Structure probing data (2A3 and DMS) for a 177-nucleotide construct. In probing experiments dimethyl sulfate is read out at A N1 and C N3, which are open when not base-paired.
RNA sequence: GGGAACGACUCGAGUAGAGUCGAAAACCGGGUAGCACAUAUAUCACUCUUCACGAUAUUAAUCGGAUCUUGGCGGCUAAAUGAUGAAGAUCCCACCACUCAUCGUUUGUUAAAUGGGAAUAGUAGACCUACCGACGUAAUUCGUUACGUCGGUAGGAAAAGAAACAACAACAACAAC
Reactivity to 2A3 in 0.01 (KOAc 150mM, MgCl2 10mM, bicine 150mM(pH8.5), 24C), signal-to-noise 3, nucleotides 027 to 126: c000c000g000g010g010u020a040g030c050a010c040a080u110a010u000a010u130c000a030c010u030c020u060u110c120a090c070g020a030u040a020u150u240a080a100u090c050g060g000a030u000c020u020u130g050g010c010g020g000c010u050a080a090a060u110g010a020u030g030a010a010g000a060u030c000c000c020a030c040c020a070c010u020c000a060u000c000g030u040u050u100g170u090u090a040a070a090u170g020g000g070a070a030u150a050g080u060a010g040a040
Reactivity to DMS in 0.01 (KOAc 150mM, MgCl2 10mM, bicine 150mM(pH8.5), 24C), signal-to-noise 3, nucleotides 027 to 126: c010c000g030g000g000u010a020g010c040a020c080a070u000a080u050a070u000c010a030c090u010c030u020u000c060a060c090g030a080u000a050u030u020a080a060u010c040g000g000a040u010c050u010u000g000g020c020g010g010c070u020a010a040a020u010g000a050u010g010a070a020g000a110u000c000c000c010a100c110c060a120c050u000c020a050u000c020g010u010u000u010g000u000u010a050a090a090u000g010g000g010a060a070u000a090g020u010a090g000a260